This 177-nucleotide RNA was probed chemically with 2A3 and DMS. The reactions ran in a buffer of 150 mM KOAc, 10 mM MgCl2 and 150 mM bicine (pH 8.5), at 24 C. It was measured as part of the RMDB library RFMREP. For 2A3 the reverse transcriptase was SuperScript II with manganese.

[RMDB]
RNA sequence: GGGAACGACUCGAGUAGAGUCGAAAAACACACCGCCCGUCAAAGCACCCGAGUGAGGUCCGGAUGAGGCCUGGUCACCAGGUCGAAUCUGGGCUUCGCAAGGGGGCUUAAGUCGUAACAAGGUAGCCAUAUGGUGAAAGUUCGCUUUCACCAUAUGAAAAGAAACAACAACAACAAC
Reactivity to 2A3 in 0.01 (KOAc 150mM, MgCl2 10mM, bicine 150mM(pH8.5), 24C), signal-to-noise 3, nucleotides 027 to 126: a010c050a000c010a010c020c020g030c020c030c000g040u050c060a050a000a000g000c010a020c000c000c000g000a000g000u010g000a000g000g010u000c000c010g020g000a010u010g030a010g020g020c010c000u040g000g020u300c110a150c280c000a010g000g000u000c000g010a000a000u000c000u000g000g000g010c010u000u000c000g010c000a000a000g000g000g000g000g000c000u000u000a000a020g020u010c020g030u080a070a020c050a100a060g070g030u030a040g100c040
Reactivity to DMS in 0.01 (KOAc 150mM, MgCl2 10mM, bicine 150mM(pH8.5), 24C), signal-to-noise 4, nucleotides 027 to 126: a090c100a120c100a090c050c040g000c050c010c010g030u000c080a100a050a010g020c020a030c000c010c000g010a300g000u000g000a010g010g020u000c000c010g030g010a040u000g010a300g000g000c000c010u000g000g000u000c110a130c030c000a010g000g030u000c000g010a160a010u000c000u000g020g000g000c000u010u000c000g020c020a020a250g000g010g010g000g020c000u000u000a050a070g010u000c070g000u000a090a060c120a090a140g010g010u000a090g010c140